[RMDB]
RNA sequence: GGGAACGACUCGAGUAGAGUCGAAAAGUCAUGUGUAUGUUGGGGAUUAAACCCUGAUUGAGUUCAGCCCACAUACUUUGUUGAUUGGUUGUCAAUCAUGGCAAAAGUGCACGCUACUUUGAUAACCGCUGAUUACAUUGUUCGCAAUGUAAUCAGCAAAAGAAACAACAACAACAAC
Reactivity to 2A3 in 0.01 (KOAc 150mM, MgCl2 10mM, bicine 150mM(pH8.5), 24C), signal-to-noise 3, nucleotides 027 to 126: g070u050c060a090u130g050u000g010u090a020u020g170u180u120g020g010g010g010a030u120u200a100a080a040c020c030c000u020g020a020u040u150g050a090g300u030u010c020a020g060c000c000c000a000c000a000u020a000c000u020u080u070g070u020u000g020a180u020u070g040g010u030u010g000u020c000a020a030u030c020a060u060g000g000c000a110a000a000a080g160u100g110c090a040c130g010c030u060a020c040u030u020u020g020a020u070a030a000c000c030
Reactivity to DMS in 0.01 (KOAc 150mM, MgCl2 10mM, bicine 150mM(pH8.5), 24C), signal-to-noise 3, nucleotides 027 to 126: g000u000c060a080u020g020u000g000u000a000u020g010u030u030g010g000g040g030a080u050u080a090a060a080c140c210c000u010g000a030u010u040g010a200g000u000u000c050a060g000c000c010c000a050c010a000u000a050c000u000u000u000g000u000u010g010a050u010u010g020g020u010u020g000u000c000a010a020u010c090a100u000g020g030c030a060a090a070a120g020u030g020c120a060c160g000c040u000a070c100u000u000u000g010a040u000a080a060c080c010